[RMDB]
RNA sequence: GGGAACGACUCGAGUAGAGUCGAAAAGAUAUGGAGCGACCAGAACUACUUGCGAAGGAUCGCUCGGAAACGAGCGAUUGUUGACGCAAGCUGGCGCUCCUAAGUCAAAACAUGGCUUCGGCCAUGACUAACAGAUUACGUUCGCGUAAUCUGUUAGAAAAGAAACAACAACAACAAC
Reactivity to 2A3 in 0.01 (KOAc 150mM, MgCl2 10mM, bicine 150mM(pH8.5), 24C), signal-to-noise 6, nucleotides 027 to 126: g040a010u070a050u180g000g000a010g020c010g300a300c030c020a010g020a090a070c220u300a050c000u300u010g020c010g040a080a030g130g010a010u000c000g000c010u000c000g000g020a060a060a010c010g000a000g000c000g020a010u000u040g090u090u120g130a060c020g000c010a010a000g000c000u000g000g000c000g000c000u000c000c010u000a000a000g000u000c010a000a010a050a110c010a010u000g000g000c000u110u070c300g140g000c030c000a010u020g010a060
Reactivity to DMS in 0.01 (KOAc 150mM, MgCl2 10mM, bicine 150mM(pH8.5), 24C), signal-to-noise 6, nucleotides 027 to 126: g010a070u000a300u010g010g010a020g000c000g000a150c010c000a010g000a080a040c080u020a300c030u000u000g010c010g020a300a120g010g010a000u000c000g020c000u000c000g000g000a110a110a260c000g010a010g010c000g000a010u000u000g010u010u010g000a300c040g000c010a010a010g020c010u000g010g010c000g010c000u000c000c000u000a010a060g010u000c040a130a060a130a210c020a000u000g000g000c000u000u020c230g030g010c000c000a000u000g000a250
This 177-nucleotide RNA was probed chemically with 2A3 and DMS. It was measured as part of the RMDB library TTRDES. For DMS, 6,868 sequencing reads were counted. For DMS the reverse transcriptase was MarathonRT. Reactivities are rounded to 0.1 and cut off at 0 and 3. The 2A3 profile rests on 14,645 reads.